[RMDB]
RNA sequence: GGGAACGACUCGAGUAGAGUCGAAAAGGUUCAACAUGACGUUUAUGACACUCUGCAAAUAACUUAUGGUAAUACUCAACACCUUUAGGGUUAACUUCGCCAUAUCCAUUUGGGAAGAUACGUGACCUGAAGCGUAUAGCUUCGGCUAUACGCUUCAAAAAGAAACAACAACAACAAC
Reactivity to 2A3 in 0.01 (KOAc 150mM, MgCl2 10mM, bicine 150mM(pH8.5), 24C), signal-to-noise 3, nucleotides 027 to 126: g040g000u010u070c040a040a030c030a120u110g080a050c070g030u020u070u040a130u110g010a010c020a010c050u060c020u060g050c030a010a080a070u080a080a060c030u070u060a020u120g000g000u020a020a060u060a080c020u020c050a080a000c010a060c050c000u040u070u160a050g020g000g020u040u030a050a040c020u040u020c090g090c140c000a030u030a030u070c030c020a070u050u090u000g050g010g010a050a000g010a040u100a090c070g050u060g010a020c000c030
Reactivity to DMS in 0.01 (KOAc 150mM, MgCl2 10mM, bicine 150mM(pH8.5), 24C), signal-to-noise 4, nucleotides 027 to 126: g010g000u000u010c060a060a070c100a090u000g000a070c150g020u000u000u010a080u000g000a100c080a070c070u010c070u010g000c060a020a050a050u010a050a050c070u000u000a080u020g000g000u000a040a040u010a040c050u010c070a040a060c080a040c030c040u000u010u010a110g020g010g000u000u000a090a080c060u000u010c040g000c010c010a030u000a060u010c160c150a130u000u010u000g000g000g000a040a030g000a100u000a050c110g020u010g000a060c050c020